[RMDB]
Record summary: Structure probing data (2A3 and DMS) for a 177-nucleotide construct. The DMS profile rests on 1,466 reads. DMS adducts were read by reverse transcription with MarathonRT. It was measured as part of the RMDB library TTRDEL.

RNA sequence: GGGAACGACUCGAGUAGAGUCGAAAAGAUAUGGAGUGAACUACGACAAAUAGAGCGUUGAAAUCGGAAACGAUGGAGCUCUAUAAGUCGCACUCCUAAGUCAAACGACGCACUUCGGUGCGUCGAAGUGUAGUAGAAGCUUCGGCUUCUACUACACAAAAGAAACAACAACAACAAC
Reactivity to 2A3 in 0.01 (KOAc 150mM, MgCl2 10mM, bicine 150mM(pH8.5), 24C), signal-to-noise 2, nucleotides 027 to 126: g010a010u060a020u100g000g000a010g010u030g010a130a120c140u180a060c300g000a000c010a010a260a000u030a010g010a000g020c020g210u300u090g030a000a010a010u000c010g010g070a100a070a030c000g000a000u010g040g000a010g010c000u020c010u000a010u010a010a010g000u000c000g000c010a010c020u010c000c010u000a140a010g030u010c020a040a020a160c020g010a000c000g000c020a000c000u070u060c230g140g000u020g000c000g000u010c000g000a010a000
Reactivity to DMS in 0.01 (KOAc 150mM, MgCl2 10mM, bicine 150mM(pH8.5), 24C), signal-to-noise 2, nucleotides 027 to 126: g010a020u040a300u000g000g000a030g000u000g020a150a070c100u030a300c010g010a000c000a010a300a020u000a020g010a000g020c000g030u000u000g030a090a100a030u020c000g010g020a120a040a160c000g000a010u000g000g000a080g010c010u010c000u000a000u000a020a300g000u000c000g000c020a030c000u000c000c000u000a010a070g000u000c030a100a130a280c030g010a010c020g010c000a000c000u000u040c160g020g000u000g000c000g000u000c000g010a010a070